Structure probing data (2A3) for a 207-nucleotide construct. Source: RMDB library RNAMAK, as collected in RNAgym. For 2A3 the reverse transcriptase was SuperScript II with manganese.
RNA sequence: GGGAACGACUCGAGUAGAGUCGAAAAGGGGUCUACGCACGAGCUACAGCUUUUGACGCUCUGAAGCCUCCACGGAGCGAUAAGCUGUAGAACUACUCGGGCGUAGACGGAGGCACCCAAAGAUGUUCAGCUUGCGUUCGCGCAAGCUGAACAUCAACAAAGAAUCCUUCUUCGGAAGGAUUCUUUGAAAAGAAACAACAACAACAAC
Reactivity to 2A3 in 0.01 (KOAc 150mM, MgCl2 10mM, bicine 150mM(pH8.5), 24C), signal-to-noise 1, nucleotides 027 to 156: g050g010g020g000u020c010u000a000c010g020c000a000c000g000a000g010c000u000a000c000a010g020c010u170u300u300u240g110a090c050g000c000u000c000u020g030a090a010g000c000c000u000c010c000a020c020g000g000a000g030c020g020a050u090a270a120g000c010u030g000u020a010g000a010a000c070u300a050c000u010c000g000g000g040c000g020u000a000g000a000c000g000g000a010g010g000c000a020c000c000c000a000a100a030g000a000u000g010u000u000c010a000g010c010u000u010g000c070g030u050u160c280g030c010g020c140a000a010g000c000u010g030a000a000c000a000u000c000a000a000